[RMDB]
RNA sequence: GGGAACGACUCGAGUAGAGUCGAAAAACGCCUGUAAUCUCAGCUACUGGGGAGGCUGAGGCAGGAGAAUCGCUUGAAACCAGGAGGCGGAGAUUGUACCAAGAUAGUUUGUUCCAGCUAAACAACCUGGCGCUAGUGCAGGAAAAGGUGGAAGGCAUCGCCUAAUCAUGUUCGCAUGAUUAGGCGAAAAAGAAACAACAACAACAAC
Reactivity to 2A3 in 0.01 (KOAc 150mM, MgCl2 10mM, bicine 150mM(pH8.5), 24C), signal-to-noise 1, nucleotides 027 to 156: a000c030g000c010c020u000g040u140a220a230u140c000u000c010a010g020c000u090a030c140u200g010g000g010g010a020g010g000c020u000g000a000g000g000c000a010g050g000a010g070a060a130u140c060g000c040u010u060g040a080a060a060c010c010a070g000g050a040g000g050c050g000g000a010g000a050u090u140g030u040a050c040c000a090a050g050a160u140a050g040u080u020u130g010u020u000c010c020a020g000c000u100a060a060a070c030a010a030c010c000u000g070g000c060g020c010u110a000g020u120g070c000a000g010g000a030a190a000a000g060g060u050g030g000a000a050g010g010c020a010